[RMDB]
RNA sequence: GGGAACGACUCGAGUAGAGUCGAAAAGGAGAACCCACCUCCAGAGGACCCCUUCAGCGAACAGAAGGGCUCCUCCUCCUCGGGAGUAGGCCCGUAGCGAUGGGGAGGGAUGCUAGGAGUUGGGGGAGUAGGUUGUAGUUCGCUACAACCAAAAGAAACAACAACAACAAC
Reactivity to 2A3 in 0.01 (KOAc 150mM, MgCl2 10mM, bicine 150mM(pH8.5), 24C), signal-to-noise 9, nucleotides 027 to 129: g100g020a060g020a070a030c010c010c000a010c010c000u000c000c000a010g020a030g060g030a070c000c000c000c000u010u030c020a060g020c020g110a100a050c030a120g100a110a060g020g000g000c000u030c010c000u000c000c000u060c010c020u050c050g030g000g010a040g040u100a060g070g120c010c030c020g050u080a030g040c040g060a070u080g010g010g030g020a070g020g020g010a090u140g060c010u040a050g010g000a020g000u020u020g000g000g010g010g010a020g060u140a060
Reactivity to DMS in 0.01 (KOAc 150mM, MgCl2 10mM, bicine 150mM(pH8.5), 24C), signal-to-noise 9, nucleotides 027 to 129: g010g000a080g000a190a120c010c000c020a070c060c010u000c010c000a050g010a040g010g010a110c160c020c010c010u010u010c020a100g000c040g030a080a050c110a090g030a100a100g010g010g020c090u030c100c010u000c000c030u020c020c090u010c140g030g000g010a140g000u040a090g000g020c020c010c020g040u000a080g010c060g040a090u040g000g000g000g000a000g020g000g020a100u060g040c000u030a030g000g030a050g000u020u020g020g010g010g010g010a080g040u040a060

Chemical mapping of a 170-nucleotide RNA with 2A3 and DMS. The RNA was probed in 150 mM KOAc, 10 mM MgCl2 and 150 mM bicine (pH 8.5) at 24 C.